[RMDB]
RNA sequence: GGGAACGACUCGAGUAGAGUCGAAAAGAUAUGGAUCUUGGCUGCUUUUGACGCAUGAUCGGAAACGAUCAGCGAUAAGCAGCAAGAUCCUAAGUCAAAGACCCGACUGCUUCGGCAGUCGGGUCAAGCAUAUAUGUCUGUUCGCAGACAUAUAUGCAAAAGAAACAACAACAACAAC
Reactivity to 2A3 in 0.01 (KOAc 150mM, MgCl2 10mM, bicine 150mM(pH8.5), 24C), signal-to-noise 3, nucleotides 027 to 126: g020a010u060a040u110g010g000a000u010c020u070u070g300g150c000u050g020c040u210u200u190u300g180a080c020g040c150a300u050g000a000u010c010g020g000a030a080a010c000g000a000u000c000a000g000c010g050a040u050a240a040g000c000a000g000c010a000a000g010a000u010c000c000u000a040a020g010u000c020a130a080a140g020a010c010c000c020g000a010c010u010g060c010u060u120c230g160g000c050a000g000u030c000g030g150g010u020c000a000a000
Reactivity to DMS in 0.01 (KOAc 150mM, MgCl2 10mM, bicine 150mM(pH8.5), 24C), signal-to-noise 3, nucleotides 027 to 126: g000a020u000a300u010g010g000a010u000c000u000u000g030g020c000u000g010c000u000u000u010u020g000a160c060g000c010a060u000g010a010u010c000g010g000a110a060a150c000g010a000u000c000a030g000c000g000a080u000a020a020g010c010a010g010c000a010a000g000a010u000c000c000u000a020a050g000u000c020a090a170a130g000a010c000c000c000g020a010c010u000g000c000u000u010c200g010g010c000a000g020u000c000g010g000g000u010c000a000a020

Annotation:
The record gives the reactivity of an RNA of 177 nucleotides to 2A3 and DMS. The RNA was probed in 150 mM KOAc, 10 mM MgCl2 and 150 mM bicine (pH 8.5) at 24 C. Reactivities are given for positions 27 through 126. For DMS, 5,263 sequencing reads were counted.